The record gives the reactivity of an RNA of 177 nucleotides to DMS and 2A3. The RNA was probed in 150 mM KOAc, 10 mM MgCl2 and 150 mM bicine (pH 8.5) at 24 C. The DMS profile rests on 1,092 reads.
[RMDB]
RNA sequence: GGGAACGACUCGAGUAGAGUCGAAAAUGAGACUAGUCGAUGCGUCGGUACUCUAGCUGGUACGUACUCUAGCUCUGUGUACUACGUACUCAUGUGUCUAGCACUAGGAUCGUACAGCUCAUGAGAGGCCUUGGCCAUUGUUCGCAAUGGCCAAGGCAAAAGAAACAACAACAACAAC
Reactivity to DMS in 0.01 (KOAc 150mM, MgCl2 10mM, bicine 150mM(pH8.5), 24C), signal-to-noise 2, nucleotides 027 to 126: u000g020a040g010a130c010u000a080g060u000c090g000a050u000g000c040g000u010c100g010g000u000a080c060u010c060u000a030g020c050u010g020g040u000a050c100g000u000a060c110u000c010u000a030g000c010u000c040u020g040u000g000u000a020c010u000a070c110g010u010a070c040u000c070a030u020g010u010g020u000c020u000a100g000c300a110c140u010a090g000g010a120u000c030g000u010a040c080a050g000c010u010c130a040u020g000a080g000a160g000
Reactivity to 2A3 in 0.01 (KOAc 150mM, MgCl2 10mM, bicine 150mM(pH8.5), 24C), signal-to-noise 2, nucleotides 027 to 126: u130g020a010g050a090c060u070a030g060u030c030g070a000u050g020c030g000u030c080g030g080u090a090c000u000c020u040a010g040c020u030g090g030u030a050c080g090u030a020c050u000c010u050a000g010c020u010c050u090g000u010g000u000a000c010u010a030c210g010u010a040c020u000c050a060u230g030u000g060u010c060u010a020g060c050a040c130u080a030g010g080a080u150c020g030u060a010c010a040g010c020u050c060a050u110g090a040g000a030g140